[RMDB]
RNA sequence: GGGAACGACUCGAGUAGAGUCGAAAAGGACCUGAUAUCAGGCAAGAUUACCCGCUGAACUUAAGCAUAUUAAUAAGCGGAGGAAAAGAAACUAACAAGGAUUCCCCUAGUAACGGCGAGUGAAGCGAAGAACUGCAUAAUUCGUUAUGCAGUUCUUAAAAGAAACAACAACAACAAC
Reactivity to DMS in 0.01 (KOAc 150mM, MgCl2 10mM, bicine 150mM(pH8.5), 24C), signal-to-noise 9, nucleotides 027 to 126: g010g010a140c000c000u010g010a210u030a130u040c030a020g000g010c090a130a100g010a140u020u010a130c040c000c010g000c020u000g000a170a130c290u000u000a040a050g010c180a090u050a080u010u010a030a040u010a200a060g010c030g000g000a090g010g000a030a060a070a100g010a080a080a080c120u010a060a100c160a080a060g000g010a170u010u000c010c000c010c040u010a070g010u010a060a070c110g000g010c040g000a060g010u010g000a090a090g010c100g000
Reactivity to 2A3 in 0.01 (KOAc 150mM, MgCl2 10mM, bicine 150mM(pH8.5), 24C), signal-to-noise 7, nucleotides 027 to 126: g090g020a180c000c000u060g050a090u110a080u300c040a010g000g020c040a050a030g050a100u070u100a070c010c010c010g000c010u030g020a090a100c040u040u040a040a010g020c010a070u080a060u280u100a070a070u060a090a010g010c020g010g030a110g040g060a050a060a020a010g110a030a110a020c060u080a050a050c080a050a070g030g010a040u030u050c000c000c000c000u030a010g030u070a100a030c050g040g000c020g010a030g030u070g040a030a010g040c030g030

Chemical mapping of a 177-nucleotide RNA with DMS and 2A3. Values cover nucleotides 27 to 126. It was measured as part of the RMDB libraries RFM100 and RFMREP. The RNA was probed in 150 mM KOAc, 10 mM MgCl2 and 150 mM bicine (pH 8.5) at 24 C.